[RMDB]
RNA sequence: GGGAACGACUCGAGUAGAGUCGAAAAGCGUUAUGUAUUGGUCUUCCCGAACGCAUACGUUAGUGCGACUACCGUUGUUCGAAAUAAGCAAAACAGGAAGGAAGAUACAUAUCGCGAAAGAAAGAAAGGGUUUACUUUUGUUCGCAAAAGUAAACCCAAAAGAAACAACAACAACAAC
Reactivity to 2A3 in 0.01 (KOAc 150mM, MgCl2 10mM, bicine 150mM(pH8.5), 24C), signal-to-noise 2, nucleotides 027 to 126: g010c030g010u010u040a040u030g030u020a010u020u050g060g020u050c000u000u000c060c000c000g000a000a030c040g080c150a100u050a060c010g020u000u010a020g000u040g300c160g150a200c000u030a060c050c010g030u070u080g000u000u010c010g110a000a000a110u300a240a000g200c210a000a110a000a080c080a080g000g000a030a000g010g000a020a000g000a000u000a000c010a000u000a000u020c000g000c000g000a040a000a110g110a060a150a060g070a120a020a000

Structure probing data (2A3) for a 177-nucleotide construct. Reactivities are given for positions 27 through 126. Source: RMDB library OK1LIB, as collected in RNAgym. For 2A3 the reverse transcriptase was SuperScript II with manganese.